[RMDB]
This 177-nucleotide RNA was probed chemically with 2A3 and DMS. For DMS, 684 sequencing reads were counted. Conditions: 150 mM KOAc, 10 mM MgCl2 and 150 mM bicine (pH 8.5), 24 C. Values cover nucleotides 27 to 126.
RNA sequence: GGGAACGACUCGAGUAGAGUCGAAAAGCAGCGUUCGCGCUGCAAAUUACGUUCAUCUACUUAAUCGUAGACGCAUCAAUACAUCAUUCAUGGAACGGGGGAUGGUGAAAACUAGAGUUCGCUCUAGCCAGCAAUACAGGUUCGCCUGUAUUGCUGGAAAAGAAACAACAACAACAAC
Reactivity to 2A3 in 0.01 (KOAc 150mM, MgCl2 10mM, bicine 150mM(pH8.5), 24C), signal-to-noise 2, nucleotides 027 to 126: g010c000a010g000c030g070u110u160c160g030c000g040c100u000g020c010a000a020a010u150u150a030c000g010u000u000c030a020u000c020u000a010c010u020u120a070a040u200c030g000u000a010g010a020c010g040c000a080u180c100a080a100u130a220c010a010u010c000a000u000u020c000a000u030g040g010a000a020c010g000g000g000g000g000a000u000g000g010u010g030a060a050a000a020c000u000a000g000a000g060u050u090c100g060c060u000c000u010a020g010
Reactivity to DMS in 0.01 (KOAc 150mM, MgCl2 10mM, bicine 150mM(pH8.5), 24C), signal-to-noise 1, nucleotides 027 to 126: g030c000a000g010c040g010u030u000c210g080c000g000c010u010g000c000a020a030a050u000u000a030c040g020u000u000c000a300u020c000u000a020c020u020u000a130a180u010c080g000u010a020g000a040c020g000c030a050u030c180a020a030u000a100c000a000u000c010a030u000u010c000a070u000g010g000a000a000c010g010g010g010g000g000a010u000g010g040u000g010a090a130a050a250c080u000a040g000a070g000u000u000c100g000c000u000c000u000a010g000